[RMDB]
RNA sequence: GGGAACGACUCGAGUAGAGUCGAAAAGGGAUCGCGGUUGGCCCUGUCCUCGUGUCAGCCGCUAAAACUUAGAGGAAUCGCGUCGCUGGAUCCUGCCCGUCGGAGCCAGGGACGUUAAAUCAGAAGACGGACCUAAGCAUGUAGAGCCGAUGGGUGAGAUUAUACUCCUGUUCGCAGGAGUAUAAUCAAAAGAAACAACAACAACAAC
Reactivity to 2A3 in 0.01 (KOAc 150mM, MgCl2 10mM, bicine 150mM(pH8.5), 24C), signal-to-noise 9, nucleotides 027 to 156: g100g010g020a080u130c080g000c000g010g010u010u000g000g000c000c010c030u040g020u000c000c000u010c000g000u000g000u000c000a000g000c010c000g000c000u010a010a010a010a040c110u130u230a020g000a000g020g010a020a010u010c010g000c000g030u000c050g020c290u000g000g010a010u020c000c000u020g030c010c010c000g000u000c010g000g000a000g000c000c000a020g040g010g000a000c010g000u000u000a000a010a010u240c060a010g010a030a010g000a010c010g010g000a000c000c000u040a050a030g020c010a050u170g080u260a070g060a030g170c010c030g050a040u070g010g000g000u020g010a040
Reactivity to DMS in 0.01 (KOAc 150mM, MgCl2 10mM, bicine 150mM(pH8.5), 24C), signal-to-noise 2, nucleotides 027 to 156: g010g020g030a050u000c100g030c000g000g020u010u010g020g000c000c040c000u000g010u000c030c040u010c050g020u000g030u010c010a080g010c010c010g000c020u020a010a050a060a080c120u030u000a050g010a070g020g010a070a060u000c040g000c040g030u000c020g010c010u010g020g010a040u000c000c010u000g050c000c010c020g010u000c010g030g000a050g000c000c000a080g010g020g030a100c000g010u000u000a020a070a070u010c140a160g020a060a140g000a060c010g010g000a050c020c060u000a090a110g030c020a100u010g030u010a140g010a120g020c040c030g020a070u010g020g000g000u010g000a120

This 207-nucleotide RNA was probed chemically with 2A3 and DMS. Values cover nucleotides 27 to 156.